Record summary: The data come from the RNA Mapping Database (RMDB), library RFM100. An RNA of 177 nucleotides, treated with 2A3 and DMS and read out base by base. 2A3 adducts were read by reverse transcription with SuperScript II with manganese. For DMS the reverse transcriptase was MarathonRT. The 2A3 profile rests on 2,320 reads. Reactivities are given for positions 27 through 126.

RNA sequence: GGGAACGACUCGAGUAGAGUCGAAAAUUCCGAUUUGUCAGCAGCUGCAGCCGAGUUCAGCGGCCUGGUGUUCACCGCCGCCAUCGCAGAUGGCAGGGCGCACGCCCCACGCGGUAUCGUACUGACCAAGACUUGCAAGUUUCGACUUGCAAGUCUUAAAAGAAACAACAACAACAAC
Reactivity to 2A3 in 0.01 (KOAc 150mM, MgCl2 10mM, bicine 150mM(pH8.5), 24C), signal-to-noise 3, nucleotides 027 to 126: u040u000c010c000g020a140u050u040u230g020u010c010a000g000c000a000g000c010u020g000c020a020g030c030c000g020a030g030u110u100c030a060g040c000g060g000c020c010u040g030g000u020g050u090u140c110a010c060c020g010c000c000g000c020c000a010u020c090g240c240a100g020a040u000g000g010c020a040g010g000g000c020g000c010a050c150g040c000c010c000c010a060c070g030c000g040g000u040a050u060c060g000u000a070c010u010g010a020c000c060
Reactivity to DMS in 0.01 (KOAc 150mM, MgCl2 10mM, bicine 150mM(pH8.5), 24C), signal-to-noise 3, nucleotides 027 to 126: u010u000c000c000g010a120u020u010u040g010u000c010a090g000c010a080g010c060u000g000c110a110g010c000c000g000a140g030u020u020c050a100g020c010g000g000c030c080u010g000g020u000g010u020u000c030a080c020c000g000c020c170g020c000c000a000u000c010g040c260a130g000a000u000g010g000c020a190g020g010g040c000g000c160a090c180g010c010c010c030c120a120c190g030c030g000g000u010a070u000c100g000u000a140c000u010g000a150c080c130